[RMDB]
RNA sequence: GGGAACGACUCGAGUAGAGUCGAAAACGGUUUUUUCCGUCAGCGCAGUGCCCGGCUGUUCUGUUGCGGCGCGUCUCCCCACAUAGCGCGGGAUGAAUGACACGACCCACACCACGAUGUUGAGGAACUCCAUUACACUAUUCGUAGUGUAAUGGAGAAAAGAAACAACAACAACAAC
Reactivity to DMS in 0.01 (KOAc 150mM, MgCl2 10mM, bicine 150mM(pH8.5), 24C), signal-to-noise 5, nucleotides 027 to 126: c050g020g010u000u020u010u020u010u000c020c010g020u020c040a200g000c100g000c030a050g030u000g010c020c030c020g000g000c030u010g010u000u000c040u000g010u000u000g020c090g010g000c060g000c050g010u000c050u010c030c000c000c030a080c090a070u010a080g010c090g000c040g010g000g000a080u020g000a060a060u000g010a050c060a080c060g010a100c030c010c020a070c120a090c040c030a080c100g010a100u010g000u010u000g000a110g010g010a080a120
Reactivity to 2A3 in 0.01 (KOAc 150mM, MgCl2 10mM, bicine 150mM(pH8.5), 24C), signal-to-noise 4, nucleotides 027 to 126: c050g010g010u080u040u010u040u130u070c020c010g020u050c030a020g000c030g000c040a010g000u020g090c000c000c020g030g010c010u030g050u080u000c010u030g110u100u060g040c050g020g010c020g010c000g060u000c020u020c030c010c030c000a050c020a050u180a030g060c090g010c050g010g020g020a040u070g090a090a050u090g020a020c010a000c100g110a130c020c000c010a020c000a010c020c020a030c050g060a060u070g010u030u010g010a030g040g050a020a030
About this RNA:
The data come from the RNA Mapping Database (RMDB), libraries RFM100 and RFMREP. This 177-nucleotide RNA was probed chemically with DMS and 2A3. Reactivities are rounded to 0.1 and cut off at 0 and 3.